RNA sequence: GGGAACGACUCGAGUAGAGUCGAAAAGAAAAUACAAGGCUGACAAAACCCUGUCCCAACCUCCACGUGGUGUCGGCUGGAUAAUGCUGCAAUAUGUUGCAUUUAUCAACUGGGAAGGGCAAAAAAAUCCAUCUAUAGUCUUCGGACUAUAGAUGGAAAAAGAAACAACAACAACAAC
Reactivity to DMS in 0.01 (KOAc 150mM, MgCl2 10mM, bicine 150mM(pH8.5), 24C), signal-to-noise 1, nucleotides 027 to 126: g030a090a050a130a110u010a110c080a050a080g020g000c000u010g000a010c020a050a210a140a120c090c010c020u000g010u000c020c000c000a090a050c020c020u010c060c110a150c230g020u020g000g010u010g000u000c010g010g010c000u010g010g000a000u000a050a000u000g000c040u000g010c010a030a100u010a050u010g030u000u000g000c000a020u000u000u000a030u010c000a050a020c070u010g020g010g020a050a080g000g000g040c150a000a000a050a090a070a070a060

Record summary:
The record gives the reactivity of an RNA of 177 nucleotides to DMS. The DMS profile rests on 1,017 reads. Reactivities are given for positions 27 through 126.